[RMDB]
RNA sequence: GGGAACGACUCGAGUAGAGUCGAAAAAGGUUUUUGACGCACGUCGUUGACAAAACGCGAUUGGGAAAAUUGAUGCCGAUAUCUGGUGAGGAAGUUUACUUCUUCAACCAAUAUCUGGAGAACAAGAAUCCACCUUUGUCGGAGUACAAAGGUCCGGCAAUUCCUGCUGAUUCGUCAGCAGGAAUUGAAAAGAAACAACAACAACAAC
Reactivity to DMS in 0.01 (KOAc 150mM, MgCl2 10mM, bicine 150mM(pH8.5), 24C), signal-to-noise 1, nucleotides 027 to 156: a050g010g020u000u020u000u000u030g010a130c090g010c030a060c070g000u000c060g020u010u000g010a230c120a080a070a090a080c080g060c020g000a100u000u010g020g000g000a060a040a070a080u050u000g000a200u000g020c010c000g000a020u000a020u000c110u020g050g040u010g000a090g000g000a010a000g030u000u000u020a130c020u000u000c000u010u020c010a070a050c050c010a000a040u000a000u000c010u000g060g000a140g000a020a230c050a110a080g010a020a080u000c010c000a150c000c020u000u000u010g060u000c010g010g070a240g050u010a040c010a000a010a010g030g050u000c000c020g120g010
Reactivity to 2A3 in 0.01 (KOAc 150mM, MgCl2 10mM, bicine 150mM(pH8.5), 24C), signal-to-noise 3, nucleotides 027 to 156: a000g130g000u080u030u020u040u060g060a050c040g070c060a040c120g200u240c030g010u080u060g070a070c080a060a100a060a000c060g050c040g050a130u110u120g000g030g060a000a090a040a140u050u070g010a080u170g060c000c030g000a000u000a000u010c200u070g000g000u000g000a010g000g040a010a000g020u120u210u210a230c020u000u000c000u000u000c000a040a120c000c000a000a000u020a010u020c180u240g050g000a060g040a060a030c020a000a030g040a020a050u000c000c000a010c010c000u010u020u000g020u000c070g230g220a170g030u140a010c000a000a010a000g010g030u030c030c020g040g040